[RMDB]
RNA sequence: GGGAACGACUCGAGUAGAGUCGAAAAAGGCAAGCCAAGAUGCGGUGCCAUACUUGUUAUCUUCGGUGUGCCAUUCGCCUGUGGGUUCAAGGAUGACGUCGUCGACUGUAUCUGGGACGGCCUUGAGGAUGUCCAUCACGUAUCUAGAAUGGAGAACCCAAACUAAACACUUCGGUGUUUAGUUUGGAAAAGAAACAACAACAACAAC
Reactivity to 2A3 in 0.01 (KOAc 150mM, MgCl2 10mM, bicine 150mM(pH8.5), 24C), signal-to-noise 4, nucleotides 027 to 156: a000g040g010c040a080a040g030c000c010a010a020g000a000u030g020c040g020g010u050g080c110c040a040u170a080c020u160u300g060u150u240a030u030c000u010u060c100g030g000u050g030u030g070c020c000a020u060u080c060g070c050c010u020g010u040g030g040g000u030u030c030a010a010g030g020a020u090g070a040c020g040u040c030g050u060c070g090a110c080u110g040u150a090u040c070u100g010g060g000a020c040g020g020c000c000u030u030g020a030g040g040a030u050g030u040c010c000a020u060c060a040c100g030u040a030u070c050u070a040g110a190a070u090g020g000a050g010a060a030c000
Reactivity to DMS in 0.01 (KOAc 150mM, MgCl2 10mM, bicine 150mM(pH8.5), 24C), signal-to-noise 2, nucleotides 027 to 156: a060g020g000c020a050a070g040c020c020a090a050g020a040u000g020c000g020g010u010g020c120c140a070u000a010c020u000u010g010u010u010a050u000c030u000u010c090g010g000u010g020u000g000c090c070a260u000u010c020g030c040c010u000g050u000g040g020g010u010u010c000a130a080g010g010a030u000g020a040c020g020u020c020g050u010c060g030a080c010u010g000u010a300u010c060u000g020g010g020a050c000g020g000c000c000u010u000g030a100g030g000a080u000g000u000c020c010a060u020c060a080c090g000u010a060u000c040u000a140g020a110a060u010g010g010a060g020a050a110c110